RNA sequence: GGGAACGACUCGAGUAGAGUCGAAAAUCCCAUGCAUGAUGCAUAUCGAUCGAUCUGAUCUGAAUUAGGUCAUCGAUGCGCAUCUGGAUCCCCAUCUUGUUGAUAGUUCAAGAAAGUCCUUGGAAAAAAUUCUUCACCAAUUCGUUGGUGAAGAAUUAAAAGAAACAACAACAACAAC
Reactivity to DMS in 0.01 (KOAc 150mM, MgCl2 10mM, bicine 150mM(pH8.5), 24C), signal-to-noise 4, nucleotides 027 to 126: u000c010c000c000a080u040g000c060a050u020g000a010u000g000c000a040u000a000u000c000g010a000u010c190g010a010u000c000u000g010a020u000c300u050g010a180a080u000u010a000g000g020u000c000a010u000c000g010a000u000g000c110g000c000a000u000c010u000g000g010a160u010c010c020c010c030a090u040c140u010u010g000u000u010g000a090u010a080g010u000u010c020a030a020g000a120a120a140g000u010c080c020u000u000g000g010a000a020a100a100
Reactivity to 2A3 in 0.01 (KOAc 150mM, MgCl2 10mM, bicine 150mM(pH8.5), 24C), signal-to-noise 3, nucleotides 027 to 126: u000c020c010c020a030u130g070c020a060u220g000a000u020g000c000a000u000a000u080c010g000a000u010c090g010a000u000c010u010g020a000u020c100u160g200a300a110u030u010a000g010g010u000c010a000u000c000g000a000u020g000c010g010c000a010u000c010u000g020g040a050u010c020c000c020c000a070u070c030u110u050g000u000u020g050a120u050a120g070u050u020c000a010a050g020a130a170a020g060u030c010c020u030u040g050g060a020a010a120a000

An RNA of 177 nucleotides, treated with DMS and 2A3 and read out base by base.
For 2A3 the reverse transcriptase was SuperScript II with manganese.